[RMDB]
RNA sequence: GGGAACGACUCGAGUAGAGUCGAAAAACGGCAAAACCGAAAGCCAGGUGGGUUGAACGCUUGCUUGAAUUCAAGUAUGAGCGUAAGCAAAAUAUCAAGGAUGAGAGGACGAGAGAUAUCGCUGAUACAAAGAACACGAUCUUAGGUUCAACAUGCCGGUUCAAAAGUGAUUCGUCACUUUUGAACCAAAAGAAACAACAACAACAAC
Reactivity to DMS in 0.01 (KOAc 150mM, MgCl2 10mM, bicine 150mM(pH8.5), 24C), signal-to-noise 1, nucleotides 027 to 156: a100c080g020g060c020a100a050a110a210c070c050g050a170a060a160g000c000c040a090g000g030u010g010g020g010u000u010g030a110a080c030g000c050u000u020g050c000u000u000g000a300a150u000u000c010a050a100g020u000a060u030g050a060g000c010g000u000a060a220g010c000a040a050a100a020u000a060u000c040a070a060g000g030a130u000g000a130g010a080g000g000a030c010g020a060g010a010g000a070u010a110u000c110g000c010u020g000a080u000a240c070a100a060a140g000a030a100c070a090c040g000a050u020c050u000u000a070g010g020u000u000c040a020a120c060a110u000g000c060c030
Reactivity to 2A3 in 0.01 (KOAc 150mM, MgCl2 10mM, bicine 150mM(pH8.5), 24C), signal-to-noise 5, nucleotides 027 to 156: a000c020g010g000c030a050a030a000a080c030c020g090a070a040a000g030c040c020a010g000g040u050g010g060g010u030u070g050a040a010c010g000c040u010u010g000c000u060u030g060a270a210u300u150c010a030a010g010u010a090u170g050a020g000c010g000u030a020a020g020c030a010a070a080a040u140a030u100c040a030a060g050g000a030u060g010a030g020a020g000g030a010c050g010a020g000a000g010a040u020a010u130c060g000c090u020g010a010u030a150c060a020a150a040g040a100a000c040a010c120g020a040u020c020u080u070a040g020g020u050u040c020a020a020c000a020u090g030c030c040

Structure probing data (DMS and 2A3) for a 207-nucleotide construct.
The reactions ran in a buffer of 150 mM KOAc, 10 mM MgCl2 and 150 mM bicine (pH 8.5), at 24 C.
For 2A3 the reverse transcriptase was SuperScript II with manganese.